[RMDB]
RNA sequence: GGGAACGACUCGAGUAGAGUCGAAAAUGUGGAGUAGGUGCCCAGGCAUCGUGCAGACAGGGCGACAUCAGCUGGGGACGAUGGGCCUGAGCUAGGGCUGGAAAGAAGGGGGAGCCAGGCAUUCAUCUCUACCUAGACUAUUCGUAGUCUAGGUAGAAAAAGAAACAACAACAACAAC
Reactivity to DMS in 0.01 (KOAc 150mM, MgCl2 10mM, bicine 150mM(pH8.5), 24C), signal-to-noise 6, nucleotides 027 to 126: u000g030u000g000g010a100g020u010a100g010g010u010g020c010c010c050a140g010g010c040a080u000c070g030u010g010c070a100g000a170c140a110g010g000g010c030g000a080c110a050u000c060a090g000c050u000g010g010g000g010a080c140g000a070u010g010g010g010c020c010u000g000a080g010c040u000a080g000g000g010c060u000g000g000a080a070a080g000a080a090g010g010g000g000g000a080g000c030c020a040g010g010c080a100u010u000c090a090u010c150
Reactivity to 2A3 in 0.01 (KOAc 150mM, MgCl2 10mM, bicine 150mM(pH8.5), 24C), signal-to-noise 3, nucleotides 027 to 126: u130g010u090g020g020a090g030u100a060g070g080u070g010c020c020c040a050g080g000c000a060u090c100g110u130g030c020a020g070a140c030a080g050g000g000c050g070a050c010a090u090c050a030g010c030u030g030g000g000g010a030c050g060a090u080g060g110g030c010c010u020g020a030g000c030u030a030g020g040g000c050u070g040g050a130a130a030g090a040a060g020g000g000g000g000a000g010c000c000a000g020g000c010a000u090u070c020a060u030c010